This 177-nucleotide RNA was probed chemically with DMS and 2A3. The DMS profile rests on 856 reads. DMS adducts were read by reverse transcription with MarathonRT.

RNA sequence: GGGAACGACUCGAGUAGAGUCGAAAAAGACAUACGUUCGCGUAUGUCUGACGGGCACCUGACCCUAAGGAAAUGCUCUAUGACAGGACACACUCAUUGUGAUACCUCGAGAUUUCGAUCUCGAGAAGGCAUCUGAUGGAUUCGUCCAUCAGAUGCCAAAAGAAACAACAACAACAAC
Reactivity to DMS in 0.01 (KOAc 150mM, MgCl2 10mM, bicine 150mM(pH8.5), 24C), signal-to-noise 1, nucleotides 027 to 126: a000g000a030c000a000u010a000c000g070u010u020c180g020c000g040u010a000u000g000u000c020u010g000a070c110g000g020g000c010a070c000c030u000g000a210c010c020c040u000a080a100g010g010a030a080a080u000g000c040u000c040u000a080u000g010a080c100a030g010g000a170c050a100c130a100c080u000c120a110u010u010g010u000g020a160u000a060c080c000u000c000g010a010g000a040u000u000u060c180g020a040u000c000u000c010g000a020g000a100a030
Reactivity to 2A3 in 0.01 (KOAc 150mM, MgCl2 10mM, bicine 150mM(pH8.5), 24C), signal-to-noise 2, nucleotides 027 to 126: a000g010a010c000a010u000a010c000g030u010u080c220g020c050g100u000a000u010g000u010c000u000g000a020c010g000g020g000c000a070c020c000u070g120a140c000c000c030u050a050a000g050g080a070a080a080u090g000c000u000c030u060a160u180g100a060c010a030g100g000a010c020a010c000a020c060u060c080a130u070u120g090u030g080a080u160a140c010c000u000c010g010a000g000a010u080u060u140c150g100a000u000c000u020c000g010a000g000a010a030